[RMDB]
RNA sequence: GGGAACGACUCGAGUAGAGUCGAAAAUUCGGCAAUGCAGGGCAUCGUGAACAGGCAGGAUAUUAAACCGUUCAUUGCCCAUAUCCGCCGUGGUGCAGGACAGGAAGCUAUCGAGUUUAGAAACGGUUCACGUAUCCUAUUCGGCGCUCGUGAAAACCGUCUUGAAGUAAUUCGUUACUUCAAGACGAAAAGAAACAACAACAACAAC
Reactivity to 2A3 in 0.01 (KOAc 150mM, MgCl2 10mM, bicine 150mM(pH8.5), 24C), signal-to-noise 7, nucleotides 027 to 156: u090u040c010g020g010c040a030a060u090g050c040a150g000g000g020c020a030u080c130g080u020g020a030a020c030a080g060g030c070a050g060g100a050u080a070u170u250a120a070a030c000c010g000u020u020c020a050u060u080g000c000c010c000a010u030a000u020c030c050g000c000c000g020u060g020g010u060g030c050a050g010g040a030c010a020g020g050a060a040g030c030u040a060u130c050g050a050g070u020u090u120a090g050a030a060a010c040g040g000u050u050c070a020c070g020u040a050u100c000c000u070a150u070u100c020g030g000c040g020c020u030c030g030u050g020a040a070a010a010c030
Reactivity to DMS in 0.01 (KOAc 150mM, MgCl2 10mM, bicine 150mM(pH8.5), 24C), signal-to-noise 3, nucleotides 027 to 156: u000u000c020g020g020c020a120a090u010g050c090a180g030g020g020c020a050u000c110g010u000g000a070a060c030a100g070g000c070a130g020g020a170u010a100u000u010a060a080a070c010c020g020u000u010c020a130u000u000g000c000c010c030a230u000a030u000c040c070g010c010c000g040u010g000g020u000g010c030a100g000g000a080c040a090g020g050a100a150g000c050u000a080u000c050g000a140g010u000u000u000a130g000a110a090a050c010g010g000u000u000c060a060c090g000u000a130u000c010c000u000a160u000u000c040g010g020c060g020c040u000c000g020u000g000a060a050a060a070c100
An RNA of 207 nucleotides, treated with 2A3 and DMS and read out base by base. For DMS, 7,660 sequencing reads were counted. The data come from the RNA Mapping Database (RMDB), library OK3TST. The RNA was probed in 150 mM KOAc, 10 mM MgCl2 and 150 mM bicine (pH 8.5) at 24 C.